The record gives the reactivity of an RNA of 177 nucleotides to 2A3 and DMS. Conditions: 150 mM KOAc, 10 mM MgCl2 and 150 mM bicine (pH 8.5), 24 C. Values cover nucleotides 27 to 126. For 2A3 the reverse transcriptase was SuperScript II with manganese. Source: RMDB library OK1LIB, as collected in RNAgym.
RNA sequence: GGGAACGACUCGAGUAGAGUCGAAAACAGUGAAAGGCGAGGUCAGCGUCAGCAGCCCGCCGCUGAACGCAGGACAACGCCAAAAGUCGGCGGGGAAAGAUACAGGCUGAAGAUACAGCCAGUACAAAAUUUACUAAUUAUUCGUAAUUAGUAAAUUAAAAGAAACAACAACAACAAC
Reactivity to 2A3 in 0.01 (KOAc 150mM, MgCl2 10mM, bicine 150mM(pH8.5), 24C), signal-to-noise 8, nucleotides 027 to 126: c050a030g080u140g230a170a130a070g020g000c040g040a130g160g200u020c010a010g000c010g000u010c000a010g000c010a010g040c000c010c000g000c010c000g000c000u000g020a050a010c000g010c040a070g020g140a030c050a300a100c160g000c000c010a010a040a000a010g170u140c060g000g000c010g000g010g010g010a030a100a020g060a020u070a030c020a020g000g000c000u010g020a070a010g030a130u110a080c000a010g000c000c010a000g010u010a020c040a000a160
Reactivity to DMS in 0.01 (KOAc 150mM, MgCl2 10mM, bicine 150mM(pH8.5), 24C), signal-to-noise 9, nucleotides 027 to 126: c070a160g020u050g010a090a120a110g000g010c010g010a100g030g010u000c010a070g000c000g000u000c010a020g010c010a100g010c010c020c020g020c030c020g000c010u000g000a050a020c020g010c000a120g000g010a020c030a080a090c050g010c000c010a050a050a080a080g020u030c120g010g020c020g020g000g000g010a080a070a090g000a180u000a010c030a070g010g010c000u000g010a110a130g010a250u020a090c000a000g000c000c000a070g020u000a020c080a060a060